[RMDB]
RNA sequence: GGGAACGACUCGAGUAGAGUCGAAAAGGAGUAGGGUAUUCACUGAGCACGUAGGGAUCCUACGGCAGCGAUGGGAAAGAGGGGUUAAGCCCCGGGUGUGCGCUAGCGCAGGUGGAGAGGACAGGACGAAUCUACAAAGUUUCGACUUUGUAGAUUCAAAAGAAACAACAACAACAAC
Reactivity to 2A3 in 0.01 (KOAc 150mM, MgCl2 10mM, bicine 150mM(pH8.5), 24C), signal-to-noise 9, nucleotides 027 to 126: g090g020a100g050u130a050g050g030g030u080a110u060u090c050a050c100u040g040a030g040c030a020c160g010u010a010g030g070g050a070u090c000c000u010a010c000g010g020c030a040g010c010g050a070u090g010g040g060a030a150a030g130a110g020g010g000g020u070u130a120a120g080c010c000c000c010g030g010g000u060g010u020g010c030g010c110u110a080g010c030g000c040a020g030g040u080g030g050a070g010a020g030g030a030c040a060g040g020a020c100
Reactivity to DMS in 0.01 (KOAc 150mM, MgCl2 10mM, bicine 150mM(pH8.5), 24C), signal-to-noise 8, nucleotides 027 to 126: g000g010a090g010u020a070g000g000g010u000a040u030u010c030a050c050u010g000a240g010c040a100c020g010u010a040g010g000g010a140u040c030c010u000a020c030g010g010c100a070g000c060g000a120u010g000g000g000a080a080a090g000a140g000g000g010g010u010u030a080a140g000c020c000c010c040g010g000g000u010g020u010g010c020g010c100u020a110g010c040g030c030a040g010g020u020g010g000a080g000a100g010g010a080c110a060g000g020a140c180